Overview:
An RNA of 170 nucleotides, treated with DMS and 2A3 and read out base by base.
[RMDB]
RNA sequence: GGGAACGACUCGAGUAGAGUCGAAAAUUCCAUUGACCCACUGCUCGAGGACGUCCUCCCUGUCUCCUCGGUUCUUCUUCGAUCCGGACCGGCUCAUCUCGGCAAAAGGCGGCAGUCCUCAGUGCUCCAAGCCAUAGCUUCGGCUAUGGCAAAAGAAACAACAACAACAAC
Reactivity to DMS in 0.01 (KOAc 150mM, MgCl2 10mM, bicine 150mM(pH8.5), 24C), signal-to-noise 5, nucleotides 027 to 129: u000u000c110c130a110u000u000g020a060c030c050c110a050c000u020g010c000u000c020g030a050g070g030a160c100g010u010c000c000u020c000c020c040u010g030u020c050u010c010c040u010c020g000g050u040u010c070u000u000c060u000u000c120g030a120u020c040c030g000g040a070c150c060g020g020c020u040c050a090u030c010u020c040g030g020c090a020a020a060a060g020g030c100g000g010c090a000g000u030c040c000u010c000a060g010u000g080c060u030c050c030a080a150
Reactivity to 2A3 in 0.01 (KOAc 150mM, MgCl2 10mM, bicine 150mM(pH8.5), 24C), signal-to-noise 5, nucleotides 027 to 129: u120u040c050c010a030u030u100g010a010c030c020c050a070c040u020g000c000u010c010g000a010g030g090a200c010g020u010c000c000u050c000c000c000u020g030u030c040u000c020c000u000c010g040g000u040u040c020u070u030c020u040u070c040g080a100u020c030c010g010g010a040c020c010g010g010c020u000c000a070u000c010u010c000g020g050c020a060a050a030a000g030g000c000g020g020c010a010g030u040c000c000u040c010a030g020u040g050c010u010c020c010a050a020